Record summary: Conditions: 150 mM KOAc, 10 mM MgCl2 and 150 mM bicine (pH 8.5), 24 C. Structure probing data (2A3) for a 207-nucleotide construct.
[RMDB]
RNA sequence: GGGAACGACUCGAGUAGAGUCGAAAAUAGCAGGACAUAGCCGUUAUUCGCGAAGCGGUGUAGCGUCACUUUGAUGGCGGUACUAUGAAUUGAUGCAAGGUGUGGAGCGACCUUAAACAGUUCUGGUUUGACGGCUUUCAGUUCGCUGAAAGCCGAAUCAAGUAGCCGUGUUCGCACGGCUACUUGAAAAAGAAACAACAACAACAAC
Reactivity to 2A3 in 0.01 (KOAc 150mM, MgCl2 10mM, bicine 150mM(pH8.5), 24C), signal-to-noise 2, nucleotides 027 to 156: u100a020g010c040a030g010g020a010c010a050u070a040g010c000c000g030u040u020a070u090u120c060g050c090g050a090a000g040c050g020g000u080g030u080a040g070c010g030u030c010a030c070u060u110u170g160a210u060g000g000c000g050g000u010a030c010u020a010u060g040a060a080u070u060g020a030u050g030c010a040a020g000g010u010g030u090g020g000a010g000c000g010a010c000c000u020u120a090a000a000c040a050g010u000u000c010u000g090g060u030u110u080g050a030c010g000g000c000u000u000u000c000a020g020u020u090c150g010c120u000g000a000a000a000g000c000c000g000a000a020
For 2A3 the reverse transcriptase was SuperScript II with manganese.